[RMDB]
RNA sequence: GGGAACGACUCGAGUAGAGUCGAAAAGAUAUGGAGACCUGGGUGUUUCAUCGAUCUCGGAAACGAGGGAGAAGCCCACAUGGUCUCCUAAGUCUAAAAGCUUCAUGUACUUCGGUACAUGAAGCAAGGAUAAGGUUACGUUCGCGUAACCUUAUCCAAAAGAAACAACAACAACAAC
Reactivity to 2A3 in 0.01 (KOAc 150mM, MgCl2 10mM, bicine 150mM(pH8.5), 24C), signal-to-noise 2, nucleotides 027 to 126: g030a020u030a030u080g020g000a000g030a000c000c040u020g020g040g000u240g100u070u180u120c140a210u200c080g040a040u000c000u020c020g040g000a100a050a040c020g000a020g010g010g000a050g010a010a010g000c000c070c010a080c040a090u090g000g000u010c000u000c010c000u000a000a000g000u000c010u010a110a150a030a010g010c000u000u000c000a000u010g000u000a000c000u060u080c300g080g010u000a000c000a000u000g010a010a000g000c000a010a000
Reactivity to DMS in 0.01 (KOAc 150mM, MgCl2 10mM, bicine 150mM(pH8.5), 24C), signal-to-noise 2, nucleotides 027 to 126: g010a020u010a300u010g000g000a010g000a000c020c000u020g000g030g010u010g010u000u010u000c080a200u000c100g010a200u010c010u000c010g020g010a180a060a190c010g020a020g000g010g000a190g000a030a130g000c000c010c010a070c160a060u000g000g000u000c000u000c000c020u000a020a040g000u000c010u000a090a070a110a200g000c000u000u000c000a010u000g010u000a000c000u000u010c150g010g000u000a020c000a000u000g000a000a010g000c000a020a020